[RMDB]
RNA sequence: GGGAACGACUCGAGUAGAGUCGAAAAAAAUCCGCCGCCUGAGGAUGAGGGAAGAGAUGAACCAGGCUAGCCGCCGGGAGGCCUGUCGGUAGGCGGAACGGACGGCGAAGCGAAAUAUACCGACUACGCUCGUAGAUGCUUAAGUGGCGAUGCCUCUGAUGAAGUAAUGCUUCGGCAUUACUUCAUCAAAAGAAACAACAACAACAAC
Reactivity to 2A3 in 0.01 (KOAc 150mM, MgCl2 10mM, bicine 150mM(pH8.5), 24C), signal-to-noise 1, nucleotides 027 to 156: a010a000a100u000c000c000g000c000c010g000c000c000u000g000a010g000g010a010u040g010a020g070g090g020a200a080g030a090g050a240u210g030a020a030c110c000a000g000g010c010u000a000g000c000c000g000c000c000g030g020g000a080g250g270c020c000u020g010u000c010g010g000u000a000g000g000c000g000g000a000a000c000g000g050a020c000g000g000c000g000a000a000g010c010g130a020a000a000u000a000u000a010c000c000g000a000c000u000a000c000g000c000u000c020g060u000a030g000a140u070g030c060u130u110a140a130g060u080g040g030c030g080a060u270g050c000c010u000c010u010